[RMDB]
RNA sequence: GGGAACGACUCGAGUAGAGUCGAAAAAGGGAGAGAUGCUAGGAGUUAGAGGAGACCGAAGCGAGGAGGAAAGCAAAGAAAGCAACGGGGCUAGCCGUCAGGUGUUCCACCCCCCGAGAGGGUACGACAUGUUAUAGUACUUCGGUACUAUAACAUGAAAAGAAACAACAACAACAAC
Reactivity to 2A3 in 0.01 (KOAc 150mM, MgCl2 10mM, bicine 150mM(pH8.5), 24C), signal-to-noise 3, nucleotides 027 to 126: a000g040g020g000a040g000a000g010a030u060g030c030u050a040g010g040a040g040u050u050a020g030a030g040g030a020g020a010c010c030g040a030a000g020c020g020a030g020g030a010g020g030a070a020a010g000c040a040a060a080g060a040a070a000g020c020a030a050c050g010g000g020g030c020u020a010g030c010c000g010u010c040a030g030g050u040g020u070u010c010c000a050c000c000c000c010c000c010g010a020g010a010g030g030g020u070a020c030g010a000
Reactivity to DMS in 0.01 (KOAc 150mM, MgCl2 10mM, bicine 150mM(pH8.5), 24C), signal-to-noise 6, nucleotides 027 to 126: a070g010g000g000a070g000a080g000a080u000g000c070u000a070g020g010a070g020u000u000a080g020a090g000g000a100g000a080c050c050g010a090a100g010c140g010a080g000g000a070g010g000a060a060a080g020c090a050a050a090g010a070a080a110g010c050a060a070c110g000g000g000g010c080u010a100g000c030c030g000u000c100a040g000g010u000g010u000u000c030c030a130c020c020c010c010c010c030g010a100g000a070g010g010g010u000a040c190g010a200
Source: RMDB library 15KREP, as collected in RNAgym. Chemical mapping of a 177-nucleotide RNA with 2A3 and DMS. 2A3 adducts were read by reverse transcription with SuperScript II with manganese. The reactions ran in a buffer of 150 mM KOAc, 10 mM MgCl2 and 150 mM bicine (pH 8.5), at 24 C.